[RMDB]
RNA sequence: GGGAACGACUCGAGUAGAGUCGAAAAUGCCAGAUCGCGUCAAAUGCCUGCACGUGUUGAUCGCCUAUGCAUUGGCAGAAGGUCCCGACCACUUCCGUCUCGGUACCGAGGCUGUAGCUUUGGCUGCAACCAGACCUGAGUUCGCUCAGGUCUGGUUAAAAGAAACAACAACAACAAC
Reactivity to 2A3 in 0.01 (KOAc 150mM, MgCl2 10mM, bicine 150mM(pH8.5), 24C), signal-to-noise 1, nucleotides 027 to 126: u170g000c020c000a010g010a120u030c040g000c000g070u080c030a040a070a100u110g030c030c020u060g030c160a070c070g040u060g080u160u120g060a050u060c080g020c030c000u130a030u110g040c010a060u090u100g080g000c000a010g010a070a030g000g000u010c040c000c020g000a030c020c010a030c020u060u050c000c030g030u040c000u000c020g100g050u040a230c130c040g000a030g010g100c070u030g060u090a000g030c030u060u070u080g030g010c000u020g060c000
Reactivity to DMS in 0.01 (KOAc 150mM, MgCl2 10mM, bicine 150mM(pH8.5), 24C), signal-to-noise 2, nucleotides 027 to 126: u030g000c020c010a080g000a040u000c200g020c010g010u020c070a060a110a080u010g000c040c030u000g000c140a050c090g000u000g000u010u000g010a070u010c080g000c060c090u000a110u000g020c050a110u000u010g010g020c000a020g000a140a120g010g010u000c010c030c020g000a110c110c050a120c100u000u000c040c060g010u000c000u000c040g000g000u000a080c110c020g010a100g020g010c030u000g000u000a040g000c050u000u000u010g000g040c030u000g000c070